[RMDB]
RNA sequence: GGGAACGACUCGAGUAGAGUCGAAAAAAAAGAUAUGGACGUCAGUGGUGGAGCUAGCUGGAGAAGGCUCGGAAACGAGCCGUAACAGCUUGGACCUCCACGUAACAUCUGACGUCCUAAGUCAAAAUCUUCUUUCUAUCUUCGGAUAGAAAGAAGAAAAAGAAACAACAACAACAAC
Reactivity to DMS in 0.01 (KOAc 150mM, MgCl2 10mM, bicine 150mM(pH8.5), 24C), signal-to-noise 5, nucleotides 027 to 126: a080a040a060a060g000a020u000a300u000g000g010a010c000g010u000c000a000g030u000g010g010u000g000g010a020g010c030u000a020g010c000u000g000g010a110g010a130a180g000g000c000u000c000g010g000a050a060a150c010g010a010g010c000c000g010u010a060a280c000a010g000c010u000u020g010g010a130c300c000u000c010c000a000c000g000u000a010a070c150a030u010c000u000g000a010c010g000u000c000c000u000a000a030g020u010c010a120a080a140a170
Reactivity to 2A3 in 0.01 (KOAc 150mM, MgCl2 10mM, bicine 150mM(pH8.5), 24C), signal-to-noise 1, nucleotides 027 to 126: a020a010a040a030g090a040u100a040u130g000g000a000c000g000u000c000a000g000u030g010g000u010g010g000a000g030c030u010a000g000c010u000g040g030a050g000a040a020g000g010c010u000c020g020g000a050a080a030c010g010a000g000c000c000g010u000a010a000c000a000g020c020u030u050g050g050a090c010c020u000c010c000a000c000g000u020a000a000c010a280u210c000u010g000a010c010g000u000c000c000u000a010a010g020u000c010a010a010a010a280